An RNA of 207 nucleotides, treated with 2A3 and read out base by base. Conditions: 150 mM KOAc, 10 mM MgCl2 and 150 mM bicine (pH 8.5), 24 C. For 2A3, 468 sequencing reads were counted. For 2A3 the reverse transcriptase was SuperScript II with manganese.
RNA sequence: GGGAACGACUCGAGUAGAGUCGAAAAUAGAGACCACUAGCUUCCUACCAAAAUCACUUUUUCCUUCUUCGUGGAUACACAAACUACCUUUAGCAGCUCCAUUUGAAAUUAAGUGUGCUAUGUGACUAAGUUUUCUCUAGUGCAUUGUAAAUGAAACGUAUAGCGACCUUUUCGAAGGUCGCUAUACAAAAGAAACAACAACAACAAC
Reactivity to 2A3 in 0.01 (KOAc 150mM, MgCl2 10mM, bicine 150mM(pH8.5), 24C), signal-to-noise 2, nucleotides 027 to 156: u200a000g100a040g020a050c000c020a010c070u000a030g010c040u100u050c000c010u070a180c020c060a120a040a020a090u070c030a100c090u030u070u070u040u130c090c000u060u090c010u000u040c050g050u010g100g050a070u070a040c070a000c020a030a070a040c040u120a090c030c010u070u140u110a030g050c090a000g010c020u040c020c040a020u110u090u070g150a170a160a070u080u040a070a050g010u040g040u000g000c010u030a000u150g120u060g030a050c020u090a130a040g040u040u170u010u000c060u050c050u030a000g000u000g100c000a110u190u040g050u230a030a130a060u300g100a160a070a040c130